An RNA of 207 nucleotides, treated with 2A3 and DMS and read out base by base. For 2A3 the reverse transcriptase was SuperScript II with manganese. The DMS profile rests on 2,820 reads. The RNA was probed in 150 mM KOAc, 10 mM MgCl2 and 150 mM bicine (pH 8.5) at 24 C.
RNA sequence: GGGAACGACUCGAGUAGAGUCGAAAAAUCAUACUGUAGUAACCUGCAAUGAGUCAAUAUCGUUAAGCUAAACAGACAGCUGUCGCACUCGUUCAGAUCUCUACAGUAUAUGAACGAUGCUUCAUACAGCUGUCAGAAGGGCCUGAUGGAAGCACAACACUUGGUACAUCUUCGGAUGUACCAAGUGAAAAGAAACAACAACAACAAC
Reactivity to 2A3 in 0.01 (KOAc 150mM, MgCl2 10mM, bicine 150mM(pH8.5), 24C), signal-to-noise 3, nucleotides 027 to 156: a000u100c050a020u020a080c000u070g020u040a010g020u010a030a140c020c040u100g030c070a090a170u110g020a040g090u090c040a050a140u070a050u160c070g050u100u090a050a020g000c020u040a160a010a080c030a020g020a010c000a000g000c000u010g010u020c020g000c020a020c110u000c000g000u000u000c010a010g020a160u040c070u040c020u110a040c010a020g020u000a020u000a000u030g000a020a000c030g020a010u030g000c000u090u140c060a050u080a230c010a010g000c000u020g000u020c010a010g020a010a020g050g010g000c010c040u050g000a030u100g000g070a030a020g050c070a020c010a040a080
Reactivity to DMS in 0.01 (KOAc 150mM, MgCl2 10mM, bicine 150mM(pH8.5), 24C), signal-to-noise 2, nucleotides 027 to 156: a070u000c080a050u010a060c000u000g000u010a050g060u070a050a050c060c020u000g050c100a040a090u000g000a080g030u000c040a080a070u000a060u000c130g020u010u010a050a070g000c050u000a070a000a190c090a180g000a080c070a060g010c010u000g030u000c170g030c070a060c050u000c020g050u000u000c000a030g010a060u000c040u010c010u010a030c050a060g030u000a050u000a030u000g000a030a050c020g010a110u000g010c030u000u000c050a210u010a130c050a040g000c020u010g010u000c010a040g000a080a200g000g000g030c000c030u000g030a090u000g030g000a100a040g030c020a050c010a050a200